An RNA of 177 nucleotides, treated with 2A3 and DMS and read out base by base. The reactions ran in a buffer of 150 mM KOAc, 10 mM MgCl2 and 150 mM bicine (pH 8.5), at 24 C. The 2A3 profile rests on 1,844 reads.
RNA sequence: GGGAACGACUCGAGUAGAGUCGAAAAUUAGAUGAUCAGAGGGGAAAAGAAGAGCUAGAGCAAUGGUUACGGAAUGGUAGCAAUACCAUAUCGUGAUCUCUAAUGAGCGUCCUCAUACUGUCCAAGGAGUUCGAUUUGGAUUCGUCCAAAUCGAACUAAAAGAAACAACAACAACAAC
Reactivity to 2A3 in 0.01 (KOAc 150mM, MgCl2 10mM, bicine 150mM(pH8.5), 24C), signal-to-noise 2, nucleotides 027 to 126: u050u010a070g060a090u090g030a040u050c020a000g020a060g020g010g020g030a030a000a000a080g100a010a030g010a000g060c020u060a020g010a000g020c060a060a150u240g010g010u020u020a000c030g000g040a000a000u000g010g000u000a000g000c000a000a000u000a020c000c000a000u020a040u000c000g010u010g000a010u020c000u000c020u110a090a060u090g050a030g000c040g020u000c010c020u040c000a060u100a070c020u000g020u030c100c020a030a050g150g010
Reactivity to DMS in 0.01 (KOAc 150mM, MgCl2 10mM, bicine 150mM(pH8.5), 24C), signal-to-noise 2, nucleotides 027 to 126: u020u000a080g040a000u040g000a040u020c030a020g000a080g030g000g000g010a050a040a100a080g030a140a100g010a120g010c040u000a060g000a130g020c300a030a080u010g010g020u000u000a000c000g000g000a050a010u000g020g000u000a000g000c300a050a110u000a000c000c000a000u000a030u010c010g020u000g000a000u000c010u000c050u000a020a090u050g000a040g010c060g020u010c010c000u000c030a030u000a050c030u000g000u010c070c040a100a150g000g040

For 2A3 the reverse transcriptase was SuperScript II with manganese.